[RMDB]
An RNA of 177 nucleotides, treated with 2A3 and DMS and read out base by base. The RNA was probed in 150 mM KOAc, 10 mM MgCl2 and 150 mM bicine (pH 8.5) at 24 C. The 2A3 profile rests on 3,209 reads. It was measured as part of the RMDB library TTRDEL.
RNA sequence: GGGAACGACUCGAGUAGAGUCGAAAAGAUAUGGACUAGCAAUGAUGUGGCCGACUUGGACCUCGGAAACGAGCUAGUCGUGCCAUUGAGCUAGUCCUAAGUCAAAAUCUCUUGUUCGCAAGAGAAACAUGUAUAUCGGCUUCGGCCGAUAUACAUGAAAAGAAACAACAACAACAAC
Reactivity to 2A3 in 0.01 (KOAc 150mM, MgCl2 10mM, bicine 150mM(pH8.5), 24C), signal-to-noise 2, nucleotides 027 to 126: g040a010u060a040u140g000g010a000c000u000a000g020c030a110a300u170g020a020u080g060u010g000g000c010c000g000a000c000u040u110g080g090a190c060c020u010c010g000g050a110a070a030c020g000a010g050c000u000a000g000u000c010g000u110g020c000c000a010u030u000g010a000g020c000u000a000g000u000c010c000u010a000a010g010u000c000a000a070a130a230u010c000u010c000u020u020g080u080u110c300g000c160a000a010g040a010g000a070a060a000
Reactivity to DMS in 0.01 (KOAc 150mM, MgCl2 10mM, bicine 150mM(pH8.5), 24C), signal-to-noise 3, nucleotides 027 to 126: g010a040u010a300u010g000g000a020c000u000a000g020c000a210a180u000g000a090u010g000u000g000g010c010c010g000a020c000u010u000g010g020a110c300c010u000c000g010g000a070a080a120c000g010a000g030c040u000a010g010u000c000g000u010g020c000c000a000u000u000g000a150g010c000u000a010g000u000c000c000u000a000a080g000u000c030a080a090a140a120u000c010u000c000u000u000g010u010u020c230g010c010a000a000g010a020g000a010a090a140